Background:
This 177-nucleotide RNA was probed chemically with 2A3.
RNA sequence: GGGAACGACUCGAGUAGAGUCGAAAAGCGACCACAGUCGGGACCGCGGUCGCCGCCCUGACCGGGCUGAACUUCGACGGAUCCACCUCGGGGAUCACUAGUGUGCUGGUCUUCGGCGCCGGGACCAAGCCAUCAUGAGCUUCGGCUCAUGAUGGCUAAAAGAAACAACAACAACAAC
Reactivity to 2A3 in 0.01 (KOAc 150mM, MgCl2 10mM, bicine 150mM(pH8.5), 24C), signal-to-noise 2, nucleotides 027 to 126: g040c010g030a030c000c000a060c100a100g020u100c080g000g110g080a150c020c000g100c040g030g010u030c030g020c060c000g020c050c010c000u030g070a040c040c010g000g000g090c030u030g020a030a000c000u110u070c100g070a080c030g010g030a020u050c030c050a100c020c070u190c120g000g020g020g020a060u000c080a070c070u060a030g080u100g070u170g150c050u000g000g040u000c000u020u100c040g020g030c010g060c020c000g000g010g010a020c020c020a030

It was measured as part of the RMDB library OK1LIB. Values cover nucleotides 27 to 126. 2A3 adducts were read by reverse transcription with SuperScript II with manganese.